[RMDB]
RNA sequence: GGGAACGACUCGAGUAGAGUCGAAAAAAACGAGGUCCAGAGUCACCUUUUCAGCAAAAUGCAGUUAGGGUGCUAGGAUUUCUCGAAAAUGAAAUUGGUCGUAUUAUGCAAGUAGGGCUUGCUUUUGUAGAACAUAGCACUUCGGUGCUAUGUUCUAAAAAGAAACAACAACAACAAC
Reactivity to 2A3 in 0.01 (KOAc 150mM, MgCl2 10mM, bicine 150mM(pH8.5), 24C), signal-to-noise 2, nucleotides 027 to 126: a000a000a010c040g000a040g000g000u010c030c000a050g010a030g270u240c000a000c000c010u000u000u000u020c000a000g000c010a030a150a250a100u190g000c000a010g010u030u010a000g020g000g000u000g000c000u000a000g000g000a000u000u130u030c000u000c000g010a060a090a000a000u040g000a010a080a000u170u070g020g000u060c030g030u060a120u200u030a040u240g010c040a050a030g010u090a110g140g050g040c020u000u040g000c010u070u090u060u050g140
Reactivity to DMS in 0.01 (KOAc 150mM, MgCl2 10mM, bicine 150mM(pH8.5), 24C), signal-to-noise 1, nucleotides 027 to 126: a010a050a010c030g010a000g000g020u000c000c000a140g000a040g020u080c010a000c010c010u000u000u000u010c010a040g000c020a090a070a080a090u020g040c020a050g010u000u000a010g000g020g000u010g010c010u000a100g000g020a020u020u010u010c000u000c000g020a020a030a060a080u030g060a020a030a070u000u010g000g010u020c030g000u010a040u010u000a080u020g010c100a060a050g010u010a030g020g020g000c040u010u000g010c010u000u000u000u000g020
The record gives the reactivity of an RNA of 177 nucleotides to 2A3 and DMS. For DMS the reverse transcriptase was MarathonRT. The RNA was probed in 150 mM KOAc, 10 mM MgCl2 and 150 mM bicine (pH 8.5) at 24 C.